Description: Structure probing data (DMS) for a 177-nucleotide construct. The DMS profile rests on 888 reads. DMS adducts were read by reverse transcription with MarathonRT.
RNA sequence: GGGAACGACUCGAGUAGAGUCGAAAAUAGUUGCUGUGUUUAGUCAUACUCUACAAAUUAUCUUGUUGGUAGGAUAAAUAUGGUGAGAAUUAAAGAAAAAUGAAGAUGGUAGUGGACAUUUGCAGACUAAGACGAUAGACUUCGGUCUAUCGUCUUAAAAAGAAACAACAACAACAAC
Reactivity to DMS in 0.01 (KOAc 150mM, MgCl2 10mM, bicine 150mM(pH8.5), 24C), signal-to-noise 1, nucleotides 027 to 126: u010a100g020u010u040g030c010u010g010u010g000u000u000u000a030g000u010c010a070u010a040c010u000c070u010a190c080a060a020a180u000u000a080u000c120u000u000g020u030u020g010g050u020a000g010g020a060u000a000a010a060u000a040u000g000g030u000g000a040g030a080a080u000u010a050a100a200g010a080a040a070a120a140u010g010a040a050g010a060u000g010g020u020a110g040u000g000g010a040c070a170u000u030u000g020c070a100g000a120c170